[RMDB]
RNA sequence: GGGAACGACUCGAGUAGAGUCGAAAAUACCAGGGUAGCUACUCAUCCCCACAACAGGCUUUUUCAAGCAUCUGUUGGCUAGUCAUCCUCCAUCAAAAAUGGAUGACUUGCACGGGGACCUGACCGCUCAAAAGGAGUCUUUCGAGACUCCUUUUGAAAAAGAAACAACAACAACAAC
Reactivity to DMS in 0.01 (KOAc 150mM, MgCl2 10mM, bicine 150mM(pH8.5), 24C), signal-to-noise 3, nucleotides 027 to 126: u000a170c070c040a130g010g010g020u000a080g000c050u010a080c130u000c050a230u000c010c010c000c030a300c000a060a000c010a010g000g000c000u000u000u000u000u040c280a030a000g000c000a010u010c010u000g000u000u000g010g000c020u010a020g000u000c000a010u000c000c010u010c240c160a100u030c160a010a070a070a070a100u000g000g000a020u010g010a000c000u000u000g000c000a140c200g030g000g000g020a000c090c090u000g010a080c100c080g000c110
Reactivity to 2A3 in 0.01 (KOAc 150mM, MgCl2 10mM, bicine 150mM(pH8.5), 24C), signal-to-noise 1, nucleotides 027 to 126: u090a030c000c010a000g050g000g030u120a030g060c070u110a100c020u060c100a060u060c010c000c000c020a020c030a000a000c000a000g040g000c030u030u030u030u250u240c180a080a010g020c000a130u100c060u000g060u000u010g100g050c000u010a000g000u000c000a000u000c010c000u050c040c040a230u140c060a150a010a080a080a030u090g010g000a010u000g020a020c060u000u060g000c000a020c030g010g000g040g000a020c000c000u000g040a000c000c060g000c000